[RMDB]
RNA sequence: GGGAACGACUCGAGUAGAGUCGAAAAAGAUCUAGUUCCUCCAGCGAGGAUACAGUUGCAAUGGUACUCAACAGGGCAGAAGCUAAGGUUGUUCCUAGGUAAUUCCCGGCAACUGACAACCGGCGCAAGCACUGCGUCAGUUCGCUGACGCAGUGCUAAAAGAAACAACAACAACAAC
Reactivity to 2A3 in 0.01 (KOAc 150mM, MgCl2 10mM, bicine 150mM(pH8.5), 24C), signal-to-noise 2, nucleotides 027 to 126: a010g200a110u140c050u160a070g020u020u000c020c050u070c040c000a060g000c070g100a000g070g010a010u030a160c080a000g000u050u050g060c020a080a250u200g080g000u110a020c020u020c210a030a100c070a090g110g000g000c000a000g040a300a000g010c020u020a160a000g080g110u050u050g050u100u290c000c000u000a000g000g030u020a070a020u090u060c020c000c000g030g000c020a070a030c040u000g050a120c000a020a000c000c050g000g060c020g000c050a010
Reactivity to DMS in 0.01 (KOAc 150mM, MgCl2 10mM, bicine 150mM(pH8.5), 24C), signal-to-noise 1, nucleotides 027 to 126: a100g000a040u030c030u060a100g000u000u000c060c000u000c080c100a110g000c070g050a090g000g000a090u090a040c080a060g010u030u000g020c010a010a010u040g000g000u010a090c030u100c100a050a030c100a020g030g000g010c130a100g040a120a200g000c040u000a160a040g010g040u020u000g000u000u080c000c010u000a000g000g000u000a080a150u000u000c000c000c010g010g000c060a070a000c060u000g000a010c060a060a080c010c000g010g030c160g000c080a160
An RNA of 177 nucleotides, treated with 2A3 and DMS and read out base by base. The 2A3 profile rests on 532 reads. DMS adducts were read by reverse transcription with MarathonRT. Conditions: 150 mM KOAc, 10 mM MgCl2 and 150 mM bicine (pH 8.5), 24 C.